RNA sequence: GGGAACGACUCGAGUAGAGUCGAAAAGACGAUGAGCAUCGCCAGCAACUACAAAAUCCCCGUCGAUGCCUCGGCGAACGUGCAUUCGGUGUCAGCGGUGGGCGAGCAGUACAUCGACCUGGUGUCCCCGUAAUUACCCGUUCGCGGGUAAUUACGGAAAAGAAACAACAACAACAAC
Reactivity to DMS in 0.01 (KOAc 150mM, MgCl2 10mM, bicine 150mM(pH8.5), 24C), signal-to-noise 3, nucleotides 027 to 126: g020a120c020g040a010u000g000a180g020c010a120u000c000g000c000c020a130g030c170a120a070c110u020a120c120a060a070a070a150u020c090c090c000c010g010u010c030g020a050u000g010c010c030u000c150g010g000c070g000a080a080c170g020u040g010c050a050u010u000c070g020g020u000g020u010c030a090g030c080g000g020u000g020g000g000c000g020a050g000c100a060g020u020a100c020a010u020c060g000a080c050c000u000g000g000u000g000u000c000c000
Reactivity to 2A3 in 0.01 (KOAc 150mM, MgCl2 10mM, bicine 150mM(pH8.5), 24C), signal-to-noise 7, nucleotides 027 to 126: g020a010c030g010a020u040g020a010g020c030a180u040c020g010c030c010a040g060c050a130a130c040u230a100c130a060a140a030a140u130c020c000c000c000g010u010c020g020a010u040g010c010c030u090c070g060g010c050g040a180a170c080g070u170g030c040a060u120u090c030g020g010u010g010u030c030a040g000c010g060g050u100g030g070g000c000g000a010g000c030a020g060u100a030c000a030u010c020g060a120c060c020u040g040g000u050g030u050c000c010